[RMDB]
Structure probing data (2A3) for a 207-nucleotide construct.
The reactions ran in a buffer of 150 mM KOAc, 10 mM MgCl2 and 150 mM bicine (pH 8.5), at 24 C.
Values cover nucleotides 27 to 156.
For 2A3, 555 sequencing reads were counted.

RNA sequence: GGGAACGACUCGAGUAGAGUCGAAAACAAAAAAAAUUGGGUUUGUGUUUUACAACACUUCUUGGUCACUAUGAUACUAUGAUUAUUUAGGUCUAGGCUUAGGGAAAUCUUCUGGUGCUCAGUUAUAGGGACAAACAUGUUAAUAAUACCUUUGUAACACUAUAAUGCCGUUCGCGGCAUUAUAGUGAAAAGAAACAACAACAACAAC
Reactivity to 2A3 in 0.01 (KOAc 150mM, MgCl2 10mM, bicine 150mM(pH8.5), 24C), signal-to-noise 2, nucleotides 027 to 156: c030a020a000a020a000a000a020a000a090u210u100g000g010g020u100u030u070g010u020g020u030u050u100u130a030c050a130a040c010a000c010u050u020c000u050u110g010g010u020c000a020c070u030a090u110g080a010u080a150c030u030a030u020g060a100u080u090a170u200u230u070a020g000g000u000c060u030a010g030g100c020u030u070a030g000g000g080a050a050a050u020c010u080u020c030u100g050g010u030g010c030u010c020a000g030u020u040a130u140a200g000g000g060a020c010a000a090a000c040a020u110g000u030u030a080a000u100a030a040u190a180c090c000u190u080u030g090u150a150a000